[RMDB]
RNA sequence: GGGAACGACUCGAGUAGAGUCGAAAAAUAUUUAAAGAGGAACGUACUGUAUAUUUACCUAAAGCAUACCAUCCAUUAUUAAAUCGUGAGACUGUUGUAGCUAAUACCAUCGAAUUUAUGGAAGAUAACUUUGCUAGUAAUUCGUUACUAGCAAAGUAAAAGAAACAACAACAACAAC
Reactivity to DMS in 0.01 (KOAc 150mM, MgCl2 10mM, bicine 150mM(pH8.5), 24C), signal-to-noise 5, nucleotides 027 to 126: a070u010a030u010u000u000a080a080a150g020a100g010g010a090a080c100g020u000a060c070u000g010u000a060u010a040u000u010u000a120c050c030u000a040a070a110g020c060a060u010a060c040c060a090u000c010c010a050u010u000a100u010u000a040a080a100u000c080g020u010g010a130g000a090c100u010g010u000u000g020u010a030g010c050u000a040a080u000a080c040c030a030u000c090g010a080a070u010u010u010a040u010g000g010a080a080g000a120u010a060
Reactivity to 2A3 in 0.01 (KOAc 150mM, MgCl2 10mM, bicine 150mM(pH8.5), 24C), signal-to-noise 2, nucleotides 027 to 126: a000u040a030u010u110u110a080a110a010g100a070g070g030a090a020c030g020u100a030c040u020g100u040a070u000a000u120u170u000a120c020c020u030a080a030a000g030c000a010u040a040c000c000a020u000c000c010a010u030u050a020u030u150a190a130a020u040c070g020u030g100a070g030a020c050u030g070u130u050g000u060a010g010c010u010a020a060u050a130c000c000a030u070c020g070a090a050u040u180u070a040u110g030g020a060a000g040a090u120a040